The record gives the reactivity of an RNA of 177 nucleotides to DMS and 2A3. The reactions ran in a buffer of 150 mM KOAc, 10 mM MgCl2 and 150 mM bicine (pH 8.5), at 24 C.
RNA sequence: GGGAACGACUCGAGUAGAGUCGAAAACGGGGGUGUCAGGGCGGCUGAGGGGAAGGAGGCUCUAGUACGAGAGGAACGAGCCUCCGGCGCCACUGGUUUACCGGUUGUCCGGCAGGGCAUCGCCGGGUACGUUGAUGUUAUUCGUAACAUCAACGUAAAAAGAAACAACAACAACAAC
Reactivity to DMS in 0.01 (KOAc 150mM, MgCl2 10mM, bicine 150mM(pH8.5), 24C), signal-to-noise 8, nucleotides 027 to 126: c070g000g000g000g010g020u010g010u020c090a070g000g000g000c100g000g000c090u010g010a100g010g010g010g020a170a070g000g000a010g010g010c000u000c000u000a050g010u000a130c000g000a250g000a220g000g000a110a120c150g000a010g000c000c000u000c000c000g000g010c080g000c050c030a090c060u010g000g000u000u010u020a090c050c030g010g000u010u000g010u010c000c010g000g010c140a090g000g000g000c050a060u030c090g000c000c000g000g000g020
Reactivity to 2A3 in 0.01 (KOAc 150mM, MgCl2 10mM, bicine 150mM(pH8.5), 24C), signal-to-noise 7, nucleotides 027 to 126: c020g010g000g000g010g030u090g080u090c060a050g020g070g010c080g020g020c070u100g080a100g020g020g000g010a030a050g010g000a000g000g000c000u000c000u000a010g010u000a000c000g020a010g010a050g130g000a010a000c010g000a000g000c000c000u000c000c000g000g000c000g010c000c010a090c030u050g080g000u060u100u130a100c020c000g010g000u030u030g020u020c000c000g030g050c060a100g020g030g020c010a020u070c060g010c020c000g000g010g010